[RMDB]
The record gives the reactivity of an RNA of 177 nucleotides to DMS. The reactions ran in a buffer of 150 mM KOAc, 10 mM MgCl2 and 150 mM bicine (pH 8.5), at 24 C. DMS adducts were read by reverse transcription with MarathonRT. The data come from the RNA Mapping Database (RMDB), library TTRINS.
RNA sequence: GGGAACGACUCGAGUAGAGUCGAAAAGAUAUGGACAGUAUCUUCGAAGUACCCAUCGACAUGAAGGCGUCGGAAACGACGUGGCCUUCAACAGCGAUCGGGUACUUCGAAGAUACUGUCCUAAGUCCGUUGAGAGGAAGUUCGCUUCCUCUCAACGAAAAGAAACAACAACAACAAC
Reactivity to DMS in 0.01 (KOAc 150mM, MgCl2 10mM, bicine 150mM(pH8.5), 24C), signal-to-noise 1, nucleotides 027 to 126: g000a080u000a300u040g010g000a000c000a020g010u020a000u000c000u000u000c000g000a000a030g010u000a010c000c000c010a030u000c000g000a100c120a300u000g000a010a000g010g040c000g050u000c000g000g000a070a110a300c010g020a020c010g030u020g080g040c020c010u000u010c010a050a110c300a200g000c020g020a000u000c230g000g000g020u000a000c000u000u000c000g000a000a010g000a010u000a000c000u000g000u000c020c000u020a030a110g010u000c020